[RMDB]
RNA sequence: GGGAACGACUCGAGUAGAGUCGAAAAAUAAAGGAGGUCAGGGUCAGGAGCCCCCCCCUGAACCGAGGAUAACCCUCAAAGUCGGGGGGCAACCCGCGACCGUUAGAGGACUGGUAAAAAUAAUGAAAACUCCAUUUUAGUUCGCUAAAAUGGAGUUAAAAGAAACAACAACAACAAC
Reactivity to DMS in 0.01 (KOAc 150mM, MgCl2 10mM, bicine 150mM(pH8.5), 24C), signal-to-noise 1, nucleotides 027 to 126: a070u000a090a120a100g010g000a150g040g000u000c030a110g010g010g000u000c040a150g030g000a140g000c050c070c030c010c000c010c010c010u030g020a070a070c100c150g000a050g000g010a270u020a080a180c300c000c000u000c000a030a140a060g000u000c140g000g000g000g000g000g010c060a030a020c050c000c000g030c100g030a000c000c000g000u000u000a120g010a070g020g030a070c070u020g000g000u010a010a050a080a010a070u010a140a040u030g000a040a090